Annotation: This 177-nucleotide RNA was probed chemically with DMS. Source: RMDB library OK2TRN, as collected in RNAgym. The RNA was probed in 150 mM KOAc, 10 mM MgCl2 and 150 mM bicine (pH 8.5) at 24 C. The DMS profile rests on 1,007 reads.
[RMDB]
RNA sequence: GGGAACGACUCGAGUAGAGUCGAAAAAAAAACCUCCUCCUUGCUGGGCUGUCGAUAUGGCUGCAAAAUCCAAGUGAAGUGUGCAAACCAGUCAAACCCAUGAAAAAUUUUUGGCACUCCACCCGCAACCCAGAUAUUGAUUCGUCAAUAUCUGGGUAAAAGAAACAACAACAACAAC
Reactivity to DMS in 0.01 (KOAc 150mM, MgCl2 10mM, bicine 150mM(pH8.5), 24C), signal-to-noise 1, nucleotides 027 to 126: a060a070a080a100a100c000c000u010c020c010u000c000c010u010u000g020c020u000g020g000g000c030u000g010u010c030g010a090u010a070u010g000g000c280u010g000c020a090a010a050a070u000c050c040a060a090g010u000g020a040a100g010u000g010u000g020c020a030a080a070c080c040a060g020u010c040a030a050a030c020c010c010a090u000g000a030a020a040a090a090u000u000u000u000u000g010g010c020a030c090u000c030c020a080c020c000c040g000c170a070

For DMS the reverse transcriptase was MarathonRT.